[RMDB]
RNA sequence: GGGAACGACUCGAGUAGAGUCGAAAAUGCUGUGCGAUGACGAGCAUGGCGACGAAGAGACGCAGAAGCCGCAGGACGUGACGUCAUCGUCGCACGCCUCAGGCACCACCGUUGCGUCGUCGUACCGCCAUGCGGUACGAUUCGUCGUACCGCAUGGAAAAGAAACAACAACAACAAC
Reactivity to 2A3 in 0.01 (KOAc 150mM, MgCl2 10mM, bicine 150mM(pH8.5), 24C), signal-to-noise 9, nucleotides 027 to 126: u110g000c010u010g010u010g010c020g060a090u120g090a100c070g030a030g020c020a030u040g030g000c000g000a000c000g010a030a030g140a010g010a150c010g000c020a020g030a210a040g040c020c020g050c110a050g020g040a110c030g030u040g030a080c010g050u160c070a140u170c080g050u040c020g000c010a020c040g020c000c000u090c080a070g010g000c020a050c050c030a070c030c070g130u120u090g030c000g000u010c000g000u000c000g000u020a050c010c020g000
Reactivity to DMS in 0.01 (KOAc 150mM, MgCl2 10mM, bicine 150mM(pH8.5), 24C), signal-to-noise 9, nucleotides 027 to 126: u020g010c020u010g020u010g010c000g020a110u020g000a100c160g010a210g000c010a040u010g010g010c010g010a030c020g010a040a040g000a100g010a010c010g010c020a050g000a100a120g010c010c010g000c300a060g000g010a140c090g020u000g010a060c010g010u030c210a150u030c080g000u010c020g000c050a050c100g000c010c000u010c230a280g000g010c010a140c200c070a060c170c100g000u020u010g000c010g010u000c010g000u000c000g000u000a070c050c050g000